[RMDB]
RNA sequence: GGGAACGACUCGAGUAGAGUCGAAAAAGGAGAACCUAGAUGGGGAGGUAGAGCCAGCCUGGAGACACUCAGAGGUUGGAGGGCUCUAUUGCAAGGGCUGGACUGUAUAGAGCAUUUGGAAGGCUCACACCUGUCCAGUAUUCGUACUGGACAGGUGAAAAGAAACAACAACAACAAC
Reactivity to DMS in 0.01 (KOAc 150mM, MgCl2 10mM, bicine 150mM(pH8.5), 24C), signal-to-noise 2, nucleotides 027 to 126: a140g000g020a090g000a090a090c050c020u020a080g010a110u000g020g020g020g010a070g010g020u000a030g000a110g020c010c010a020g010c030c000u000g000g000a100g020a120c090a070c060u000c060a100g020a080g000g010u000u000g020g010a070g010g030g010c010u000c010u020a060u010u010g020c080a030a090g000g010g010c010u000g010g000a110c030u010g020u010a050u000a130g010a110g000c010a120u000u000u010g000g010a130a110g000g000c040u000c050a250
Reactivity to 2A3 in 0.01 (KOAc 150mM, MgCl2 10mM, bicine 150mM(pH8.5), 24C), signal-to-noise 1, nucleotides 027 to 126: a000g110g020a060g040a010a060c010c050u070a140g020a110u120g020g010g020g010a030g000g040u040a020g010a010g080c010c000a000g000c020c000u060g030g120a040g020a030c140a020c060u100c020a030g100a000g190g070u100u040g070g000a020g000g050g010c020u000c010u030a110u080u080g040c020a030a020g050g030g000c000u010g000g010a040c020u030g000u040a090u040a060g000a000g050c030a030u050u020u060g070g080a140a030g010g000c000u000c000a030
The record gives the reactivity of an RNA of 177 nucleotides to DMS and 2A3. Reactivities are given for positions 27 through 126. It was measured as part of the RMDB library OK2TRN. The reactions ran in a buffer of 150 mM KOAc, 10 mM MgCl2 and 150 mM bicine (pH 8.5), at 24 C. For 2A3, 1,009 sequencing reads were counted. High 2A3 reactivity points to a flexible backbone, as in loops and unpaired stretches.